[RMDB]
RNA sequence: GGGAACGACUCGAGUAGAGUCGAAAAUGUUCGCUUAUCCAUAUUUCCCCGUUCUGGGGAAGCCUCAUGGGUAAAUUAGAAGGACAACCUUUGUUUUAAAGGUAUACCUUCGCUUUUUAGAACAGCGCCUAUAUUAGUACUUCGGUACUAAUAUAGGAAAAGAAACAACAACAACAAC
Reactivity to 2A3 in 0.01 (KOAc 150mM, MgCl2 10mM, bicine 150mM(pH8.5), 24C), signal-to-noise 9, nucleotides 027 to 126: u050g000u000u010c010g000c090u010u010a000u000c000c000a000u010a040u030u010u000c010c010c000c010g150u280u150c160u300g000g000g000g000a000a000g010c010c040u150c070a010u010g000g000g000u010a020a040a040u150u130a030g000a010a000g020g020a030c110a080a030c010c010u030u010u030g300u080u200u110u300a020a010a000g020g000u020a060u130a050c000c000u000u000c000g000c010u150u130u030u060u160a040g000a020a000c010a020g040c010g020
Reactivity to DMS in 0.01 (KOAc 150mM, MgCl2 10mM, bicine 150mM(pH8.5), 24C), signal-to-noise 9, nucleotides 027 to 126: u000g000u000u000c010g020c230u000u000a010u000c000c000a010u000a120u020u000u000c000c000c000c010g010u020u030c210u060g020g010g000g000a010a010g010c300c210u020c180a010u000g000g010g000u000a000a030a120u030u030a090g010a010a000g010g020a040c170a040a020c000c000u000u000u000g010u030u030u030u030a010a020a010g000g010u000a030u020a040c000c000u000u000c000g010c170u000u010u020u010u020a100g010a020a020c010a050g010c190g010